[RMDB]
Chemical mapping of a 177-nucleotide RNA with DMS. The reactions ran in a buffer of 150 mM KOAc, 10 mM MgCl2 and 150 mM bicine (pH 8.5), at 24 C. For DMS the reverse transcriptase was MarathonRT.

RNA sequence: GGGAACGACUCGAGUAGAGUCGAAAAUAAGACCAUAGCGAUGGGGGGAGAUGCUAGGAGUUGGGGGAGACCGAAGCGAGGAGGAAAGUAAAGAAAGCAACGGGGCUAGCCGUCAGGUGUUCCUCCCGAUCAUAUUCGAGUUCGCUCGAAUAUGAUCAAAAGAAACAACAACAACAAC
Reactivity to DMS in 0.01 (KOAc 150mM, MgCl2 10mM, bicine 150mM(pH8.5), 24C), signal-to-noise 1, nucleotides 027 to 126: u020a280a140g020a100c020c000a060u000a100g020c090g000a150u030g010g000g060g010g000g010a060g000a070u020g000c060u000a030g000g000a160g000u020u010g030g000g000g020g030a130g010a080c040c080g010a120a090g000c070g000a080g020g000a020g000g000a050a020a090g000u020a030a060a170g010a100a060a120g020c110a050a100c140g020g000g000g050c120u000a090g000c030c030g000u000c180a040g000g000u000g000u030u030c020c010u000c010c030c150

Background: Source: RMDB library 15KREP, as collected in RNAgym.